[RMDB]
RNA sequence: GGGAACGACUCGAGUAGAGUCGAAAACUGUGUAUUGAUAUAGAGACUAUUGACUAAUUUUGCUAUAAUUGCCUGAGUACUGUCCAUAUCACAUCACAAUGACAGGUCAACUACUGUGAUAGCAUUUCCUCGACAUGAGAGAUGAUACUCGCGUCAAGCACGUAAGUUGGUUCGCCAACUUACGUGCAAAAGAAACAACAACAACAAC
Reactivity to 2A3 in 0.01 (KOAc 150mM, MgCl2 10mM, bicine 150mM(pH8.5), 24C), signal-to-noise 2, nucleotides 027 to 156: c070u020g000u000g040u050a030u080u090g030a030u000a010u040a160g210a070g010a060c060u020a100u220u150g030a000c020u060a100a150u140u210u090u140g000c070u150a070u080a210a180u240u090g000c000c070u090g030a010g070u030a110c050u050g000u010c030c000a000u010a020u030c070a110c040a060u000c010a010c000a090a070u120g000a080c000a000g030g060u180c090a150a070c030u160a020c070u090g050u030g100a120u050a040g070c010a070u000u040u030c010c050u040c040g020a080c010a160u090g000a030g000a000g020a020u040g000a050u060a120c080u020c000g010c050g000u010c020a020a020